[RMDB]
RNA sequence: GGGAACGACUCGAGUAGAGUCGAAAAGACGAACGAAUACACAAAUGUUCCACGGUGCAGAAGGGUCCCUCACAUGAGGAUCACCCAUGUAACUCGGACAGGAUAUGCUUUUGGGAAAAAGAGAGAAAACUGAUAGAGUGUUCGCACUCUAUCAGUUAAAAGAAACAACAACAACAAC
Reactivity to DMS in 0.01 (KOAc 150mM, MgCl2 10mM, bicine 150mM(pH8.5), 24C), signal-to-noise 5, nucleotides 027 to 126: g010a090c070g000a070a080c060g020a090a060u000a060c110a060c110a050a120a100u010g000u010u000c010c020a100c150g020g000u000g010c020a020g000a100a110g020g010g000u000c130c010c010u010c010a120c240a080u020g000a010g010g000a030u000c210a040c010c010c000a070u010g000u000a030a060c020u000c130g000g010a030c060a050g000g010a120u010a030u010g010c030u000u000u000u000g000g010g010a050a050a050a050a050g010a090g000a100g000a080a060
Reactivity to 2A3 in 0.01 (KOAc 150mM, MgCl2 10mM, bicine 150mM(pH8.5), 24C), signal-to-noise 4, nucleotides 027 to 126: g070a030c040g020a070a000c020g030a080a030u200a100c100a010c010a060a140a120u070g010u120u010c010c010a020c050g020g010u010g000c010a000g030a230a110g070g000g000u000c020c010c000u000c010a290c020a210u280g010a010g020g000a030u130c020a010c000c000c010a000u020g010u020a080a060c010u020c060g000g000a010c020a020g070g000a060u040a030u200g040c010u000u040u050u100g060g020g050a010a060a010a050a000g070a000g010a000g050a030a190